[RMDB]
RNA sequence: GGGAACGACUCGAGUAGAGUCGAAAAGAAAGAAAGAAAGUUCAUUGUUUAUCGGAAACUUUAACCUAUAACCAUUCAAACUUUUCCAGAAGUUAGUUUGAAUAGAAAUUAAAAAGAAACUUCUGAAUAACCUUAUCAUGCUUCGGCAUGAUAAGAACACACUAUUUGUGUUCGCACAAAUAGUGUGAAAAGAAACAACAACAACAAC
Reactivity to 2A3 in 0.01 (KOAc 150mM, MgCl2 10mM, bicine 150mM(pH8.5), 24C), signal-to-noise 2, nucleotides 027 to 156: g040a010a020a010g060a040a070a010g050a060a040a020g020u060u060c090a140u150u150g090u120u240u120a130u230c070g010g050a110a000a000c010u020u070u110a030a070c000c010u060a060u050a210a030c040c020a010u010u000c000a000a000a000c000u010u020u010u020c080c000a000g000a010a000g020u000u000a000g000u000u000u010g010a010a010u120a180g000a000a060a030u120u220a030a020a020a020a080g010a040a000a000c000u000u000c000u000g010a000a030u060a040a010c000c000u000u000a000u000c010a000u000g000c000u060u030c110g130g000c000a010u000g000a000u000a000a000g000a010a000